Structure probing data (DMS and 2A3) for a 177-nucleotide construct. Values cover nucleotides 27 to 126. For 2A3, 1,046 sequencing reads were counted.

[RMDB]
RNA sequence: GGGAACGACUCGAGUAGAGUCGAAAAGUGAUCUCGCGGAUCAAGUCCCUGGGACUGCGCAGCCAGGUGCUGGUACUCACUUCGCAAUCCGCAGAGGCGUUCUGCAAGCGCUGCAUCCAGGUCGGUAGCGUCCAUCCAUGUUCGCAUGGAUGGACGCAAAAGAAACAACAACAACAAC
Reactivity to DMS in 0.01 (KOAc 150mM, MgCl2 10mM, bicine 150mM(pH8.5), 24C), signal-to-noise 1, nucleotides 027 to 126: g020u010g000a130u000c010u020c070g040c080g000g000a050u000c070a060a180g030u000c040c040c010u010g020g000g020a080c040u000g020c000g000c160a090g000c050c130a080g010g000u030g000c000u040g000g060u010a050c040u000c130a070c040u000u020c140g000c000a080a100u000c060c070g040c030a110g000a090g010g000c050g070u000u020c030u000g010c040a020a010g000c020g000c020u000g030c000a120u010c030c020a100g020g000u000c030g000g040u020a120
Reactivity to 2A3 in 0.01 (KOAc 150mM, MgCl2 10mM, bicine 150mM(pH8.5), 24C), signal-to-noise 1, nucleotides 027 to 126: g070u020g030a070u040c050u060c080g060c050g080g000a040u020c040a080a070g100u090c000c000c030u030g050g010g030a070c030u040g000c030g000c030a030g030c000c010a050g080g040u120g030c000u080g010g010u080a100c060u080c100a110c000u080u110c010g000c020a010a060u020c030c010g000c030a050g020a000g010g060c030g010u060u010c000u020g100c030a000a010g000c000g000c050u040g060c000a020u000c000c000a020g120g030u070c070g020g110u110a030